[RMDB]
RNA sequence: GGGAACGACUCGAGUAGAGUCGAAAAACUUCGAAAGAGGUGCUAUAAAGCUAUUAAGAAGUUUGCUUACUUCCUAGGGUUUUAUAGAUCCGUUGCUUGUAUACAAUAUACGUGUAUACAUCAAUACCCCAAGAGGAAAUGCUUGGUUGGAAGGAUGCCUCAUCUAGUACUUCGGUACUAGAUGAGGAAAAGAAACAACAACAACAAC
Reactivity to 2A3 in 0.01 (KOAc 150mM, MgCl2 10mM, bicine 150mM(pH8.5), 24C), signal-to-noise 2, nucleotides 027 to 156: a020c010u010u020c000g030a000a050a010g080a020g000g000u030g010c000u000a000u010a010a050a000g000c000u020a030u100u070a270a010g000a000a020g010u050u150u120g060c010u110u090a010c010u000u000c000c000u020a010g040g020g000u030u040u000u000a010u000a000g020a020u030c020c010g050u020u040g040c110u020u010g000u000a000u000a010c010a080a050u140a020u060a300c190g040u020g000u040a000u000a010c000a000u010c000a010a040u130a180c010c000c010c010a030a020g040a020g040g080a080a150a060u120g020c020u020u060g030g040u040u120g090g010a060a060g090g010a060u160g010
Reactivity to DMS in 0.01 (KOAc 150mM, MgCl2 10mM, bicine 150mM(pH8.5), 24C), signal-to-noise 1, nucleotides 027 to 156: a020c020u000u010c000g030a110a050a150g000a070g010g010u010g010c000u020a010u000a010a010a000g050c020u000a070u000u030a120a050g000a060a010g030u020u000u020g000c090u000u000a020c010u010u000c000c010u000a210g000g000g000u010u000u010u000a050u000a050g000a060u010c010c040g020u010u000g020c070u000u020g000u020a000u010a020c000a070a080u000a190u000a100c250g010u000g010u010a000u000a010c020a030u000c010a060a080u000a100c030c010c010c020a040a050g040a070g010g010a090a060a130u010g020c020u010u000g000g020u000u000g000g000a060a070g000g000a230u010g010
Overview:
An RNA of 207 nucleotides, treated with 2A3 and DMS and read out base by base. DMS adducts were read by reverse transcription with MarathonRT. 2A3 adducts were read by reverse transcription with SuperScript II with manganese. Values cover nucleotides 27 to 156. DMS (dimethyl sulfate) methylates the pairing face of unpaired adenines and cytosines. The data come from the RNA Mapping Database (RMDB), library ARCHII.